[RMDB]
RNA sequence: GGGAACGACUCGAGUAGAGUCGAAAAGAUAUGGAUCCACUCCCUCGCCAGGUUUCUUCGGAAACGAGAAACCUGGAACUACGAGUCGGUGGAUCCUAAGUCAAAGAUCUAAGUUCGCUUAGAUCAACAACGCUAUGAUGUUCGCAUCAUAGCGUUGAAAAGAAACAACAACAACAAC
Reactivity to DMS in 0.01 (KOAc 150mM, MgCl2 10mM, bicine 150mM(pH8.5), 24C), signal-to-noise 2, nucleotides 027 to 126: g020a030u020a300u010g020g000a020u010c010c000a000c000u000c120c120c010u000c010g020c010c000a000g000g000u000u000u000c000u010u030c020g000g020a080a160a150c010g010a030g000a000a000a000c000c000u010g000g010a020a010c110u010a300c020g000a000g030u000c140g020g020u000g000g000a000u000c000c000u000a010a050g000u000c070a120a090a120g000a000u000c000u000a020a000g020u010u000c220g020c010u000u000a000g000a010u010c000a080a220
Reactivity to 2A3 in 0.01 (KOAc 150mM, MgCl2 10mM, bicine 150mM(pH8.5), 24C), signal-to-noise 1, nucleotides 027 to 126: g020a030u100a060u170g000g010a000u010c000c000a010c010u080c030c040c000u000c020g000c010c000a010g000g010u030u000u000c090u180u100c060g030g050a170a110a090c020g010a020g000a020a000a000c020c000u010g010g000a000a000c000u040a020c020g060a000g030u110c050g050g000u020g000g000a000u000c000c000u010a040a010g050u020c030a060a130a060g000a000u010c000u010a000a020g020u040u130c260g040c120u010u020a000g000a010u010c000a010a010